An RNA of 177 nucleotides, treated with DMS and 2A3 and read out base by base. The reactions ran in a buffer of 150 mM KOAc, 10 mM MgCl2 and 150 mM bicine (pH 8.5), at 24 C. For DMS, 2,186 sequencing reads were counted. The data come from the RNA Mapping Database (RMDB), library OK2TST.

RNA sequence: GGGAACGACUCGAGUAGAGUCGAAAAUCGUCCAGCUAUUCGUGCUGACCGCGGCCGUAGUACGCGGGGUGGACUACCUCAUCACCCCGCCCGGCUCAUCCGAAGUGCUCAACCUCAUCGAACGCGCGAGGGUAUACACUUUCGAGUGUAUACCCUCAAAAGAAACAACAACAACAAC
Reactivity to DMS in 0.01 (KOAc 150mM, MgCl2 10mM, bicine 150mM(pH8.5), 24C), signal-to-noise 3, nucleotides 027 to 126: u000c080g030u000c060c020a060g020c060u000a200u020u000c080g000u010g010c030u020g000a100c060c080g030c130g010g010c020c020g000u010a090g000u010a040c160g010c030g020g010g020g040u000g000g010a080c170u000a220c100c050u000c080a200u010c000a030c000c000c000c000g030c000c060c030g010g000c030u000c050a040u000c050c030g000a090a050g020u010g000c040u000c080a100a100c030c010u000c040a060u010c060g010a090a050c130g030c150g030c200
Reactivity to 2A3 in 0.01 (KOAc 150mM, MgCl2 10mM, bicine 150mM(pH8.5), 24C), signal-to-noise 2, nucleotides 027 to 126: u070c020g060u050c030c040a010g020c050u100a090u110u180c060g050u090g050c030u040g030a080c040c030g030c030g050g020c020c020g000u000a050g070u020a070c040g000c030g000g000g000g000u010g000g000a020c050u120a160c080c020u070c020a100u030c010a010c000c000c000c010g000c000c000c010g040g000c000u000c010a040u020c000c020g060a110a020g020u030g080c000u010c050a030a100c000c010u070c020a110u050c050g080a100a050c040g000c000g040c020